[RMDB]
RNA sequence: GGGAACGACUCGAGUAGAGUCGAAAAGGAUUGGGUGGGCAGGGGAACUCCUAAAAUAAUACAUGACCACUUCCUCAUUUCUGGGGAAGGAAAGGAGACUAGAGCAGCUGGUGUGCUCACCCCUCCCAUACAUAUCUGAUUUCGAUCAGAUAUGUAUAAAAGAAACAACAACAACAAC
Reactivity to 2A3 in 0.01 (KOAc 150mM, MgCl2 10mM, bicine 150mM(pH8.5), 24C), signal-to-noise 9, nucleotides 027 to 126: g090g030a160u170u190g020g020g020u090g020g020g010c070a040g010g010g010g040a020a030c010u000c010c000u060a070a130a050a060u240a050a080u150a120c120a120u150g060a040c020c010a030c010u000u000c000c000u010c000a070u090u300u250c210u120g000g000g000g000a000a000g010g000a060a030a000g000g010a020g010a020c080u100a060g020a030g070c050a000g030c040u080g010g060u090g020u030g040c010u010c000a030c000c010c000c000u000c000c000c000
Reactivity to DMS in 0.01 (KOAc 150mM, MgCl2 10mM, bicine 150mM(pH8.5), 24C), signal-to-noise 9, nucleotides 027 to 126: g010g010a150u010u000g010g010g030u010g000g000g010c100a080g010g010g000g010a090a110c020u000c010c000u000a090a060a080a100u010a090a110u010a110c160a150u010g010a070c070c050a160c010u000u000c000c000u000c010a060u010u010u010c270u000g010g010g000g000a010a010g000g000a030a060a050g000g000a040g010a150c130u010a090g010a110g010c060a060g000c060u000g010g010u000g000u000g000c010u000c010a210c010c000c000c050u000c000c000c020